[RMDB]
RNA sequence: GGGAACGACUCGAGUAGAGUCGAAAAGCAUGUGGUUUAAUUCGAAGAUACGCGAAGAACCUUACCUAGGCUUGAUAUCCAACAAAUCCAUUAGAGAUAGUGGAGUGCUAGCUUGCUAGAAUGUUGAAUUCCAUGGAAUGUUCGCAUUCCAUGGAAUAAAAGAAACAACAACAACAAC
Reactivity to DMS in 0.01 (KOAc 150mM, MgCl2 10mM, bicine 150mM(pH8.5), 24C), signal-to-noise 5, nucleotides 027 to 126: g010c030a040u020g020u000g000g000u000u000u000a080a140u000u010c010g010a110a120g010a200u020a130c300g000c020g000a020a040g000a030a040c050c030u020u010a060c070c050u020a100g000g000c010u000u010g010a110u020a090u020c050c010a030a060c130a050a130a120u010c000c000a010u010u000a020g010a160g000a130u000a010g000u000g000g000a020g010u010g020c010u000a010g000c030u010u010g000c010u000a030g000a100a100u020g000u000u000g010a190
Reactivity to 2A3 in 0.01 (KOAc 150mM, MgCl2 10mM, bicine 150mM(pH8.5), 24C), signal-to-noise 4, nucleotides 027 to 126: g020c050a020u140g010u120g030g040u050u030u060a150a090u060u020c000g030a150a000g100a250u200a160c110g000c000g020a020a010g010a030a010c000c000u090u080a060c030c000u050a050g030g010c020u010u020g020a030u070a060u120c040c000a020a010c050a050a140a090u010c000c020a000u040u030a030g020a040g050a110u020a050g010u010g010g020a020g040u050g020c000u010a020g030c010u030u090g010c000u010a020g040a140a080u140g030u030u020g060a110

The data come from the RNA Mapping Database (RMDB), libraries RFM100 and RFMREP. An RNA of 177 nucleotides, treated with DMS and 2A3 and read out base by base. The reactions ran in a buffer of 150 mM KOAc, 10 mM MgCl2 and 150 mM bicine (pH 8.5), at 24 C. For 2A3 the reverse transcriptase was SuperScript II with manganese.